[RMDB]
RNA sequence: GGGAACGACUCGAGUAGAGUCGAAAAGCUGGUUCUCAAAUGGUGAGAUUAACCGGUACGGUACAUGGAAUUAACCACUCCAGUCAUUCUUACGGCCAACCGAAAGAGUGAGGACAUCUUGAAGCAAAAAGUAUCUACCAUUCGUGGUAGAUACUUUAAAAGAAACAACAACAACAAC
Reactivity to DMS in 0.01 (KOAc 150mM, MgCl2 10mM, bicine 150mM(pH8.5), 24C), signal-to-noise 9, nucleotides 027 to 126: g010c010u010g000g010u000u010c020u000c010a080a130a120u020g010g020u020g000a020g010a150u020u020a100a050c000c010g010g020u010a070c120g020g010u010a050c140a120u010g000g000a040a020u000u000a140a080c020c020a170c150u000c000c010a060g000u010c010a030u000u000c010u000u000a150c030g000g000c220c250a100a150c020c010g020a100a030a020g000a030g020u000g000a030g010g010a070c170a040u000c030u000u000g010a080a070g020c170a060a070
Reactivity to 2A3 in 0.01 (KOAc 150mM, MgCl2 10mM, bicine 150mM(pH8.5), 24C), signal-to-noise 9, nucleotides 027 to 126: g030c020u020g010g010u050u000c010u000c000a070a120a140u300g060g030u150g020a030g000a060u120u140a040a020c010c010g000g030u200a070c100g040g010u080a060c040a120u060g010g020a020a010u040u010a020a020c020c000a010c010u010c010c010a010g020u000c000a010u030u000c000u020u030a020c010g020g000c080c040a200a230c050c020g010a030a030a000g030a010g010u010g010a040g020g060a020c000a090u070c060u090u130g070a080a020g030c060a090a110